Chemical mapping of a 177-nucleotide RNA with DMS and 2A3. The 2A3 profile rests on 2,966 reads. Conditions: 150 mM KOAc, 10 mM MgCl2 and 150 mM bicine (pH 8.5), 24 C. For 2A3 the reverse transcriptase was SuperScript II with manganese. For DMS the reverse transcriptase was MarathonRT. It was measured as part of the RMDB library OK2TST.
[RMDB]
RNA sequence: GGGAACGACUCGAGUAGAGUCGAAAAGCAAAUGCCGGCAUAACUUCAUUGAUCAUACGUUCUAAUGAGGCUUUUUUACGUUCAAAGCUCAUGCCCGUAUCAAUCCAGAAAGAAUAUUCGUUAUAGAGCCAAAAUAUACUUUCGAGUAUAUUUUGGCAAAAGAAACAACAACAACAAC
Reactivity to DMS in 0.01 (KOAc 150mM, MgCl2 10mM, bicine 150mM(pH8.5), 24C), signal-to-noise 4, nucleotides 027 to 126: g010c080a070a110a100u010g010c150c070g010g000c060a080u000a060a100c050u000u000c040a030u000u000g010a060u010c070a110u000a100c170g010u000u000c020u010a070a030u000g010a060g010g020c010u000u000u000u010u000u010a110c080g010u010u000c090a030a060a080g010c020u010c050a030u000g000c060c020c040g040u000a030u000c100a040a120u000c040c070a130g000a100a070a090g000a090a070u000a150u000u000c080g020u010u010a120u000a110g020a300
Reactivity to 2A3 in 0.01 (KOAc 150mM, MgCl2 10mM, bicine 150mM(pH8.5), 24C), signal-to-noise 3, nucleotides 027 to 126: g030c030a070a080a060u090g030c030c010g020g020c000a040u030a110a040c000u080u040c020a040u020u060g030a010u030c030a120u070a210c070g010u020u000c020u080a060a020u050g020a010g080g010c060u060u020u010u000u030u070a070c040g010u010u060c030a110a000a010g000c000u000c040a020u080g030c000c000c000g020u030a030u120c010a030a040u000c010c020a020g090a050a070a000g100a110a060u170a100u230u220c040g010u100u140a200u130a190g100a010